[RMDB]
An RNA of 177 nucleotides, treated with 2A3 and DMS and read out base by base. For DMS, 1,565 sequencing reads were counted. 2A3 adducts were read by reverse transcription with SuperScript II with manganese. Source: RMDB library 15KREP, as collected in RNAgym. DMS adducts were read by reverse transcription with MarathonRT.
RNA sequence: GGGAACGACUCGAGUAGAGUCGAAAAUUGUUACCUCUAUACCAUUGUGUAUAGUACCUUACACUGCAUUGUACUAUUAUGCUACAUUCUAUUUUACUAAUGAGCCUGCAUUUAUUAUGCAUGUUUCGAUGGUAUCAGUGUUCGCACUGAUACCAUCAAAAGAAACAACAACAACAAC
Reactivity to 2A3 in 0.01 (KOAc 150mM, MgCl2 10mM, bicine 150mM(pH8.5), 24C), signal-to-noise 3, nucleotides 027 to 126: u070u040g040u090u040a090c010c000u000c010u010a010u000a020c040c040a210u130u230g010u000g000u130a000u000a010g010u010a030c000c000u050u060a020c050a050c070u080g000c010a020u070u030g020u030a040c020u060a030u180u050a030u090g000c010u030a050c010a030u050u020c040u070a170u060u150u050u050a090c040u060a060a120u100g030a010g020c000c040u000g000c030a000u020u050u050a150u110u090a010u020g000c030a020u030g020u010u040u010c030
Reactivity to DMS in 0.01 (KOAc 150mM, MgCl2 10mM, bicine 150mM(pH8.5), 24C), signal-to-noise 2, nucleotides 027 to 126: u010u000g010u010u000a110c090c020u000c040u000a030u000a020c010c030a200u020u010g040u000g010u000a010u010a000g000u000a040c120c040u020u000a040c120a060c160u010g010c050a040u000u000g010u000a010c160u010a100u000u000a030u000g000c040u000a070c080a090u000u000c100u000a080u010u010u010u010a110c090u000a020a060u010g010a060g000c080c090u000g000c030a020u000u000u000a110u030u000a010u000g000c000a080u010g000u000u010u000c100